[RMDB]
RNA sequence: GGGAACGACUCGAGUAGAGUCGAAAAGAUAUGGAAUACAGCUUUUGACGCAGGAGAAGGGUCGGAAACGACCCGUAACUGCGAUAAGCUGUUCCUAAGUCAAAAGACAGGGGUUCGCCCCUGUCAAGGAUACCAACUAGUUCGCUAGUUGGUAUCCAAAAGAAACAACAACAACAAC
Reactivity to DMS in 0.01 (KOAc 150mM, MgCl2 10mM, bicine 150mM(pH8.5), 24C), signal-to-noise 4, nucleotides 027 to 126: g010a040u000a300u000g000g000a050a050u010a100c010a000g000c000u000u000u000u000g030a210c060g010c010a000g010g000a120g010a110a210g010g000g020u010c000g010g000a060a080a240c000g010a010c010c000c000g000u000a020a190c010u000g000c010g000a060u000a010a000g010c000u010g010u000u000c000c010u000a070a180g000u010c050a050a060a150a120g010a020c010a010g000g000g000g010u000u020c260g000c000c000c000c000u000g020u010c000a030a030
Reactivity to 2A3 in 0.01 (KOAc 150mM, MgCl2 10mM, bicine 150mM(pH8.5), 24C), signal-to-noise 2, nucleotides 027 to 126: g030a030u120a050u170g040g000a050a060u210a210c020a010g010c020u080u100u130u170g250a110c000g000c000a010g000g060a010g020a010a020g000g020g010u000c000g000g000a050a090a030c010g000a000c020c000c040g000u000a000a000c000u000g000c000g000a000u000a000a010g010c000u000g020u010u000c000c000u020a130a070g060u050c060a000a130a070a100g010a000c000a010g000g000g020g020u050u110c250g210c000c000c000c000u000g000u000c000a000a000